Structure probing data (2A3 and DMS) for a 177-nucleotide construct. For DMS the reverse transcriptase was MarathonRT.
[RMDB]
RNA sequence: GGGAACGACUCGAGUAGAGUCGAAAAGAUAUGGACCUCAUAGACAUGCCUUGAUCGGAAACGAUACAGGCAACAGCUAUAGGUCCUAAGUCAAACGAUGGGGAAGCGUUCGCGCUUCCCCAUCGAACAUAAUCUGUCACUUCGGUGACAGAUUAUGAAAAGAAACAACAACAACAAC
Reactivity to 2A3 in 0.01 (KOAc 150mM, MgCl2 10mM, bicine 150mM(pH8.5), 24C), signal-to-noise 1, nucleotides 027 to 126: g010a000u030a000u060g010g000a000c030c020u040c070a020u030a050g070a240c080a220u210g010c010c000u150u250g030a030u010c000g010g030a070a000a000c000g030a010u120a160c000a000g000g020c020a000a020c000a030g000c010u000a000u010a010g040g010u000c010c010u020a030a000g010u020c000a120a020a120c050g010a010u030g000g010g000g030a000a040g000c070g010u070u210c300g040c020g110c100u030u000c000c000c010c020a020u000c040g000a000a000
Reactivity to DMS in 0.01 (KOAc 150mM, MgCl2 10mM, bicine 150mM(pH8.5), 24C), signal-to-noise 3, nucleotides 027 to 126: g000a040u000a240u000g000g000a020c000c000u000c300a010u010a010g000a090c080a230u010g010c000c000u000u010g010a030u000c000g010g000a060a020a130c010g010a010u000a050c100a010g020g010c000a030a070c300a070g000c000u000a010u010a010g010g000u000c000c010u000a010a060g010u000c020a100a110a200c020g000a010u000g000g000g000g000a010a010g000c000g020u000u010c230g010c000g010c000u010u000c010c000c000c000a010u000c000g010a030a100
Conditions: 150 mM KOAc, 10 mM MgCl2 and 150 mM bicine (pH 8.5), 24 C. High 2A3 reactivity points to a flexible backbone, as in loops and unpaired stretches. It was measured as part of the RMDB library TTRDEL.